[RMDB]
RNA sequence: GGGAACGACUCGAGUAGAGUCGAAAAGUUUGAGCAACAGCGUCGCGACAUAGGAGAUUGCGACCGCGCCGUUGCGAAAGUGCAUGGCGGUGGUGGCCGGCACGCCGGUCAUCGAGUCGCCGACGGCGUCUGUAAACUGCUUCGGCAGUUUACAGACAAAAGAAACAACAACAACAAC
Reactivity to 2A3 in 0.01 (KOAc 150mM, MgCl2 10mM, bicine 150mM(pH8.5), 24C), signal-to-noise 5, nucleotides 027 to 126: g100u100u120u080g080a030g020c010a020a030c020a020g020c020g080u080c020g000c000g010a010c040a070u260a150g160g110a120g170a300u030u030g010c000g020a010c020c020g000c010g010c020c070g010u010u000g000c000g020a040a030a010g140u130g070c060a120u170g020g000c010g000g030u100g000g010u000g010g000c000c010g010g000c030a020c120g060c010c000g010g010u000c000a000u010c010g030a030g080u040c010g000c020c010g000a030c030g040g050c020
Reactivity to DMS in 0.01 (KOAc 150mM, MgCl2 10mM, bicine 150mM(pH8.5), 24C), signal-to-noise 4, nucleotides 027 to 126: g010u010u010u020g000a180g010c000a010a000c050a100g020c060g010u000c000g010c010g010a030c050a150u020a190g030g010a150g010a120u000u000g010c030g020a040c080c120g020c010g000c090c100g000u000u020g000c010g000a090a030a080g020u000g020c070a110u030g010g010c000g000g010u020g000g040u000g010g000c000c000g000g020c090a170c300g010c020c000g000g000u000c020a000u000c000g000a070g020u020c010g010c000c000g000a040c120g000g000c160